[RMDB]
RNA sequence: GGGAACGACUCGAGUAGAGUCGAAAAGGCAACUCGCUACGUCCCUUAUCUUCUGAAAUCUCUGUUUCGAUCACUAAUUGGUGUGAUCCCAGGGAUUCUCAGUGGAUUAGGGCAUCGAGUCAGCUAAGAGGGACAUGAUUUUCGAAUCAUGUCCCUCAAAAGAAACAACAACAACAAC
Reactivity to DMS in 0.01 (KOAc 150mM, MgCl2 10mM, bicine 150mM(pH8.5), 24C), signal-to-noise 1, nucleotides 027 to 126: g000g070c000a300a000c000u010c000g000c180u000a200c060g000u020c010c000c000u010u000a020u000c000u000u020c000u000g040a000a000a000u010c010u000c000u020g020u010u000u010c300g020a020u000c000a000c000u000a040a160u030u140g000g010u090g000u000g060a010u010c000c300c000a000g000g000g010a060u000u000c060u020c000a000g050u000g000g010a070u000u000a000g040g010g060c000a110u040c000g000a000g000u020c050a200g000c000u000a030a030
Reactivity to 2A3 in 0.01 (KOAc 150mM, MgCl2 10mM, bicine 150mM(pH8.5), 24C), signal-to-noise 5, nucleotides 027 to 126: g030g000c010a010a020c000u010c000g040c070u190a060c140g210u300c000c020c000u010u000a000u000c010u020u010c010u010g000a000a010a010u000c000u000c000u000g140u090u180u290c090g000a000u010c000a000c020u110a180a140u210u230g170g040u090g050u010g010a000u000c000c000c000a000g000g000g000a000u010u000c010u000c000a010g000u020g000g000a000u020u060a000g000g000g030c000a000u030c000g000a000g010u000c040a000g000c010u020a110a050
This 177-nucleotide RNA was probed chemically with DMS and 2A3. 2A3 adducts were read by reverse transcription with SuperScript II with manganese. The RNA was probed in 150 mM KOAc, 10 mM MgCl2 and 150 mM bicine (pH 8.5) at 24 C.